[RMDB]
RNA sequence: GGGAACGACUCGAGUAGAGUCGAAAAGUUUGUAGCGAACAGACAUUUCUAUCUUAUGAACAAUGCUACCAACAUUACAGAAGAAAGGGUUAACAUUAACAUUACAUGCAAGGUGAUUGUUCCAACCCAAGUGGAGGAAUUUCGAUUCCUCCACUUGAAAAGAAACAACAACAACAAC
Reactivity to 2A3 in 0.01 (KOAc 150mM, MgCl2 10mM, bicine 150mM(pH8.5), 24C), signal-to-noise 5, nucleotides 027 to 126: g010u010u030u030g020u010a020g010c030g060a070a050c040a040g100a030c030a070u050u100u020c040u060a200u020c020u100u230a150u160g020a040a020c030a090a060u120g000c010u030a020c010c030a010a010c010a040u140u190a040c050a040g110a080a010g040a080a200a000g100g000g020u060u060a040a020c010a040u070u060a030a010c000a030u040u140a070c030a070u090g080c040a060a050g060g010u040g010a070u050u040g030u020u030c020c010a000a020c000c000
Reactivity to DMS in 0.01 (KOAc 150mM, MgCl2 10mM, bicine 150mM(pH8.5), 24C), signal-to-noise 6, nucleotides 027 to 126: g010u000u000u000g020u000a090g020c100g030a070a090c070a060g010a070c050a100u000u000u000c060u000a100u010c090u010u010a090u010g010a060a090c130a040a060u000g000c030u000a060c060c060a070a080c040a060u000u000a090c120a100g000a090a080g000a060a090a060g000g010g010u000u010a050a050c110a050u000u000a040a070c080a040u000u010a060c110a080u000g010c080a060a060g010g000u000g000a080u000u010g010u000u000c040c060a040a080c130c090
This 177-nucleotide RNA was probed chemically with 2A3 and DMS. Conditions: 150 mM KOAc, 10 mM MgCl2 and 150 mM bicine (pH 8.5), 24 C.